[RMDB]
RNA sequence: GGGAACGACUCGAGUAGAGUCGAAAACGGCAUCAUCGGGCCGUCGGUGCUGCUGCGGCUGCUGACGGGGCGGCUGGACGUGGCGACGCUGGAACGCAAGGUGAGCGAGAUUCUGGGCGUGGAGGCGACUGCGCGUCCCAUUCGUGGGACGCGCAGUAAAAGAAACAACAACAACAAC
Reactivity to 2A3 in 0.01 (KOAc 150mM, MgCl2 10mM, bicine 150mM(pH8.5), 24C), signal-to-noise 1, nucleotides 027 to 126: c010g020g000c040a050u120c020a000u170c130g000g170g000c020c010g070u070c040g000g120u100g100c150u000g000c000u060g000c020g000g020c000u020g000c030u000g070a010c050g050g000g000g070c030g010g000c030u030g070g000a010c030g010u000g020g020c000g020a010c010g010c000u100g080g130a040a000c020g000c130a040a000g120g020u070g010a000g090c020g020a000g000a080u200u170c110u250g000g050g000c000g000u000g010g070a070g060g000c010g020

The record gives the reactivity of an RNA of 177 nucleotides to 2A3. For 2A3 the reverse transcriptase was SuperScript II with manganese. Values cover nucleotides 27 to 126. The 2A3 profile rests on 515 reads. The reactions ran in a buffer of 150 mM KOAc, 10 mM MgCl2 and 150 mM bicine (pH 8.5), at 24 C.